Chemical mapping of a 207-nucleotide RNA with 2A3. The 2A3 profile rests on 708 reads. It was measured as part of the RMDB library OK3TST.

RNA sequence: GGGAACGACUCGAGUAGAGUCGAAAAGAUUAGUGCGACACGCGAUGCGGCUUCGUCGUCUAGUUUGGCUUCGAUGCGGUCGAGCAUGUUCUGUAGGUCUUCGAGCUCGUGGCGCAGGUAGUCACGAGAAACCAUGUCACCCACGGCAAGGCGCAGAUGGCUGGGAUCAGUUCGCUGAUCCCAGCCAAAAAGAAACAACAACAACAAC
Reactivity to 2A3 in 0.01 (KOAc 150mM, MgCl2 10mM, bicine 150mM(pH8.5), 24C), signal-to-noise 1, nucleotides 027 to 156: g060a040u070u070a010g070u050g150c000g000a010c040a060c080g000c000g190a140u300g180c060g030g030c080u090u080c060g030u000c000g010u000c000u000a030g080u070u090u090g050g020c020u050u070c080g010a050u070g080c040g080g060u010c000g000a000g000c040a080u260g010u050u000c010u020g130u110a010g000g020u000c000u040u060c060g100a030g040c000u000c000g000u000g000g000c020g030c020a050g020g290u180a030g010u030c020a000c000g000a000g010a000a000a000c010c000a010u020g040u100c050a080c040c060c000a040c040g000g000c000a030a000g040g010c070g000c000a000g010a070
Source information:
The RNA was probed in 150 mM KOAc, 10 mM MgCl2 and 150 mM bicine (pH 8.5) at 24 C.